[RMDB]
RNA sequence: GGGAACGACUCGAGUAGAGUCGAAAAGAUAUGGAUCACUCAUGGCACCCGAAGAACGUGGCUCGGAAACGAGCCACGGGAGGGUGCCAUGAGGUGAUCCUAAGUCAAAGGAGUGUUCGCACUCCAAUCACGUAAUACACUUCGGUGUAUUACGUGAAAAAGAAACAACAACAACAAC
Reactivity to DMS in 0.01 (KOAc 150mM, MgCl2 10mM, bicine 150mM(pH8.5), 24C), signal-to-noise 1, nucleotides 027 to 126: g020a050u010a300u010g000g020a010u020c000a020c010u010c000a020u020g000g010c010a030c000c000c000g000a100a270g030a170a300c010g070u030g000g060c000u000c000g050g010a080a060a300c030g030a010g030c000c000a000c000g000g000g020a100g000g020g080u010g000c000c000a000u000g000a030g000g010u000g010a010u000c010c010u010a000a070g020u020c050a110a140a170g000g000a030g010u000g020u010u030c230g030c000a010c000u010c000c020a110a110